An RNA of 177 nucleotides, treated with DMS and 2A3 and read out base by base.

RNA sequence: GGGAACGACUCGAGUAGAGUCGAAAAUCCGUGUAAAGCAGUCUCACGCUAAUCUGGCAGACAUGUCAGGGAACCACGAGAUAAAUGUAAGUUAAAAUUCUGGUCCACGAUGAUCCGCAGAAAUGCGCGAUACGGGGAUCUUCGGAUCCCCGUAUCGAAAAGAAACAACAACAACAAC
Reactivity to DMS in 0.01 (KOAc 150mM, MgCl2 10mM, bicine 150mM(pH8.5), 24C), signal-to-noise 2, nucleotides 027 to 126: u010c000c020g020u020g000u000a030a070a060g010c050a050g010u000c000u000c010a260c190g000c080u000a070a150u010c020u000g000g060c010a060g000a120c300a120u000g000u010c000a160g020g000g000a110a120c140c000a110c180g030a050g000a070u000a020a180a080u000g000u000a070a060g010u070u020a080a030a130a130u030u050c040u000g000g030u000c000c070a040c040g000a080u000g000a090u010c050c030g000c030a000g000a070a060a150u000g000c000g000
Reactivity to 2A3 in 0.01 (KOAc 150mM, MgCl2 10mM, bicine 150mM(pH8.5), 24C), signal-to-noise 1, nucleotides 027 to 126: u000c000c000g000u000g050u230a190a250a140g090c010a020g020u000c030u000c030a030c210g010c020u020a000a000u010c000u000g070g000c000a000g170a110c040a090u000g000u010c030a040g040g000g000a010a010c000c000a000c000g110a010g000a000u090a040a240a070u250g010u080a010a060g160u110u300a010a030a180a070u180u000c010u110g000g000u110c010c010a060c240g010a030u170g010a010u080c000c000g050c000a000g120a020a020a100u080g010c000g000
It was measured as part of the RMDB libraries RFM100 and RFMREP. DMS adducts were read by reverse transcription with MarathonRT.